[RMDB]
RNA sequence: GGGAACGACUCGAGUAGAGUCGAAAAUUGUCGGUGAAUCCUCCCCUGAGAGGCCUCUUCCUAGGUCCGGAGUCUACCUCCAUCUGGUCCGUCCGGGCCCUCUUCGCCGGAGGCGCCCCCUCCCCGUUACCAACGGUCUUCGGACCGUUGAAAAGAAACAACAACAACAAC
Reactivity to 2A3 in 0.01 (KOAc 150mM, MgCl2 10mM, bicine 150mM(pH8.5), 24C), signal-to-noise 5, nucleotides 027 to 129: u100u070g070u040c030g030g000u060g070a070a080u070c010c010u020c010c020c000c020u050g060a050g020a040g070g020c000c010u010c030u080u050c030c020u030a050g030g000u000c020c010g030g010a020g020u020c060u070a100c020c020u030c050c010a100u040c100u100g000g030u000c020c040g040u050c030c040g000g010g000c000c010c000u020c020u110u090c000g070c070c010g030g000a010g000g020c050g010c000c000c010c000c000u020c010c000c000c000g050u090u130a100c030
Reactivity to DMS in 0.01 (KOAc 150mM, MgCl2 10mM, bicine 150mM(pH8.5), 24C), signal-to-noise 7, nucleotides 027 to 129: u080u040g030u010c020g000g000u030g040a130a150u040c070c030u020c000c000c000c000u040g040a090g000a100g010g000c030c030u010c050u050u020c050c040u000a090g000g050u000c000c000g040g010a040g000u020c070u020a170c000c030u030c040c040a080u030c070u020g000g040u030c060c080g050u040c080c050g010g000g030c060c050c050u020c020u000u010c150g030c110c060g010g040a060g010g030c140g030c060c040c000c030c000u000c000c000c000c000g020u030u030a080c160